Chemical mapping of a 177-nucleotide RNA with DMS and 2A3. For 2A3 the reverse transcriptase was SuperScript II with manganese. Reactivities are rounded to 0.1 and cut off at 0 and 3.
[RMDB]
RNA sequence: GGGAACGACUCGAGUAGAGUCGAAAACUCUAGCGCGGCGUCCGCGCCGUCGUUCGGCGGCUUCGGUGCGUCCACGGCCGCGUUCGGCGCAGGAUCCGCGCCAGCCUUUGGUGCGUCCCCGGCGACGCGCCUAGUGUCACUUCGGUGACACUAGGCGAAAAGAAACAACAACAACAAC
Reactivity to DMS in 0.01 (KOAc 150mM, MgCl2 10mM, bicine 150mM(pH8.5), 24C), signal-to-noise 4, nucleotides 027 to 126: c030u000c030u000a070g000c000g010c010g010g000c300g030u000c010c000g000c110g010c080c010g040u000c090g020u000u010c090g040g020c000g000g000c010u000u000c300g030g010u010g020c200g010u010c030c030a050c110g000g010c000c010g010c010g000u000u000c010g000g000c010g010c010a160g030g010a040u000c030c000g000c000g010c010c020a010g000c100c050u000u010u010g010g010u010g010c010g000u000c010c000c070c120g020g010c050g000a020c060g020
Reactivity to 2A3 in 0.01 (KOAc 150mM, MgCl2 10mM, bicine 150mM(pH8.5), 24C), signal-to-noise 3, nucleotides 027 to 126: c010u020c050u040a010g000c000g010c000g030g040c090g060u000c000c010g050c120g010c100c020g020u030c000g020u060u060c060g260g020c010g010g000c020u070u050c060g010g020u050g130c220g160u060c000c010a030c030g020g000c010c000g000c020g000u020u010c010g000g010c000g000c020a060g010g000a010u000c000c000g000c000g000c000c000a010g020c000c020u210u160u220g050g010u120g020c010g010u000c010c020c050c070g110g080c100g020a010c020g000
The DMS profile rests on 5,634 reads. The 2A3 profile rests on 5,170 reads.